[RMDB]
RNA sequence: GGGAACGACUCGAGUAGAGUCGAAAAUCCUUUCUCGAUAGAGAUUGGAGUCAUACGACCCCAGAAACCAUUCCUUAUACCUUGAGUAUUGCUGAAUUCAGUUUAGCGUGCAUGCUCUUGGCUAUUCAUACCAAGGACAACUUCGGUUGUCCUUGAAUCCACACCAUAACUUCGGUUAUGGUGUGGAAAAAGAAACAACAACAACAAC
Reactivity to DMS in 0.01 (KOAc 150mM, MgCl2 10mM, bicine 150mM(pH8.5), 24C), signal-to-noise 1, nucleotides 027 to 156: u000c000c000u010u010u000c010u000c000g000a300u000a040g010a020g000a070u000u010g000g010a060g000u000c070a140u000a100c030g000a160c050c010c000c000a120g010a140a100a090c180c030a130u010u000c030c040u000u030a250u010a020c050c010u010u000g000a050g000u000a050u000u010g010c030u000g000a100a020u000u010c220a180g040u020u010u000a050g010c090g050u010g000c080a220u000g040c030u000c000u000u000g000g010c000u000a110u000u030c050a120u000a100c130c010a000a010g000g000a000c000a000a000c020u000u000c280g090g000u020u000g030u020c000c000u000u000g000a060a130
Reactivity to 2A3 in 0.01 (KOAc 150mM, MgCl2 10mM, bicine 150mM(pH8.5), 24C), signal-to-noise 3, nucleotides 027 to 156: u020c010c000u000u020u000c050u000c020g180a270u260a240g000a000g000a000u010u040g050g020a020g010u030c050a100u110a190c110g020a040c000c000c000c020a030g170a060a080a030c050c010a140u110u140c010c050u140u070a040u050a200c000c000u010u020g000a000g000u020a020u180u130g000c000u010g010a130a070u200u100c040a140g180u100u100u130a070g030c080g000u040g000c010a000u010g000c000u000c000u020u010g000g000c000u070a040u060u170c070a020u070a200c030c000a020a000g000g000a000c000a000a000c000u050u050c110g040g000u000u000g010u000c000c000u000u000g000a000a010
Chemical mapping of a 207-nucleotide RNA with DMS and 2A3. For 2A3, 1,153 sequencing reads were counted. It was measured as part of the RMDB library M2RFPK.